This 177-nucleotide RNA was probed chemically with DMS and 2A3. The RNA was probed in 150 mM KOAc, 10 mM MgCl2 and 150 mM bicine (pH 8.5) at 24 C.
RNA sequence: GGGAACGACUCGAGUAGAGUCGAAAACGAUAGCUGUUCGCAGCUAUCGAAAGGACUACCCGUCAGGGUUAAGGGCAUACGGACAGCCGGGUCCAAUGCCGAAAAGAGGGUUGUUCGCAACCCUCAACACUUAUCAAAAGUUCGCUUUUGAUAAGUGAAAAGAAACAACAACAACAAC
Reactivity to DMS in 0.01 (KOAc 150mM, MgCl2 10mM, bicine 150mM(pH8.5), 24C), signal-to-noise 9, nucleotides 027 to 126: c010g000a010u000a010g010c010u000g010u000u010c210g040c000a000g010c000u000a000u010c000g010a030a090a110g000g010a100c070u000a050c000c000c000g010u010c300a100g000g010g000u000u010a070a090g010g010g020c000a020u000a110c130g000g000a040c040a140g010c070c060g010g000g000u000c000c000a110a040u000g010c000c010g000a070a040a100a080g000a020g010g010g010u000u000g010u000u010c190g010c010a010a010c000c000c000u000c000a030a100
Reactivity to 2A3 in 0.01 (KOAc 150mM, MgCl2 10mM, bicine 150mM(pH8.5), 24C), signal-to-noise 7, nucleotides 027 to 126: c000g010a000u000a000g000c000u010g040u070u040c250g010c110a000g000c000u000a000u000c000g000a020a000a000g060g020a040c040u030a020c030c000c010g090u170c150a110g050g000g000u050u120a070a080g120g010g000c020a030u120a120c100g020g020a010c010a030g160c090c040g160g010g000u000c000c000a000a010u010g000c000c010g040a060a050a010a020g010a000g010g010g000u000u000g010u030u030c140g010c050a000a000c000c000c000u000c000a000a000